[RMDB]
RNA sequence: GGGAACGACUCGAGUAGAGUCGAAAAUCUGAGGUGGCCUCGCGUGAGCUGCGUAACGAUACGGCCGGCGUGCUGCGCCGCGUGCGGGCAGGGGAGGACGUCACCAUCACCGUCAGCGGCCGUCCGGCCCACUCAAAGGUUUCGACCUUUGAGUGGGAAAAGAAACAACAACAACAAC
Reactivity to 2A3 in 0.01 (KOAc 150mM, MgCl2 10mM, bicine 150mM(pH8.5), 24C), signal-to-noise 9, nucleotides 027 to 126: u060c020u050g040a030g090g010u060g020g020c010c020u050c030g020c030g030u060g060a100g010c030u040g000c050g050u060a100a060c060g040a050u070a150c040g040g000c030c010g010g000c030g040u100g040c070u080g030c020g010c010c000g030c030g020u110g050c050g000g040g000c050a090g030g010g020g010a070g030g040a040c030g060u060c030a030c050c000a040u090c040a010c030c010g090u090c040a030g030c000g020g000c010c000g020u030c000c000g050g000
Reactivity to DMS in 0.01 (KOAc 150mM, MgCl2 10mM, bicine 150mM(pH8.5), 24C), signal-to-noise 2, nucleotides 027 to 126: u030c020u020g010a100g010g040u010g000g000c030c020u000c060g020c070g020u030g000a110g000c010u000g010c040g000u020a060a060c140g020a110u020a120c080g000g000c020c010g000g000c070g020u030g020c080u020g000c060g020c050c020g010c040g010u020g000c070g010g000g010c090a080g000g000g010g010a120g000g000a100c050g000u010c050a100c030c040a130u000c080a130c080c030g010u000c080a080g000c020g000g020c010c020g000u010c040c030g010g000